[RMDB]
Chemical mapping of a 177-nucleotide RNA with DMS and 2A3. Reactivities are given for positions 27 through 126.
RNA sequence: GGGAACGACUCGAGUAGAGUCGAAAAGAUUCUGUUUAUCCAUUCGCUGAGUACGCUGCUCUGACCUUCUUCCCAGUCUCGGUUCCUGUUCUGGGAGCUUGGGGCUGAGUAGCCACCAGCCCUGCUCCUAGGAAAGGUCCUUCGGGACCUUUCCUAGAAAAGAAACAACAACAACAAC
Reactivity to DMS in 0.01 (KOAc 150mM, MgCl2 10mM, bicine 150mM(pH8.5), 24C), signal-to-noise 2, nucleotides 027 to 126: g000a110u010u010c040u000g030u000u010u010a030u010c000c050a090u030u020c070g000c060u000g020a070g000u010a080c180g010c000u000g010c030u030c050u000g000a190c090c030u000u000c080u020u030c000c000c020a130g010u000c010u000c060g020g010u000u010c010c020u010g030u040u040c050u010g000g000g000a000g020c130u010u080g000g000g010g020c000u010g000a030g020u010a110g000c070c080a130c060c030a030g010c000c020c000u000g010c020u000c020
Reactivity to 2A3 in 0.01 (KOAc 150mM, MgCl2 10mM, bicine 150mM(pH8.5), 24C), signal-to-noise 4, nucleotides 027 to 126: g060a050u110u080c050u070g100u120u190u110a130u090c040c040a060u120u070c040g020c030u030g010a020g080u050a070c060g000c010u020g020c020u010c010u040g230a300c000c000u110u130c020u050u010c010c020c010a030g030u020c030u040c090g110g020u050u030c010c020u070g050u090u040c010u050g000g010g000a010g000c000u090u240g020g000g020g000c000u000g000a010g020u000a020g000c000c000a020c000c000a000g000c020c000c010u010g000c010u030c000

DMS adducts were read by reverse transcription with MarathonRT.
Conditions: 150 mM KOAc, 10 mM MgCl2 and 150 mM bicine (pH 8.5), 24 C.
For DMS, 3,223 sequencing reads were counted.
Source: RMDB library RFM100, as collected in RNAgym.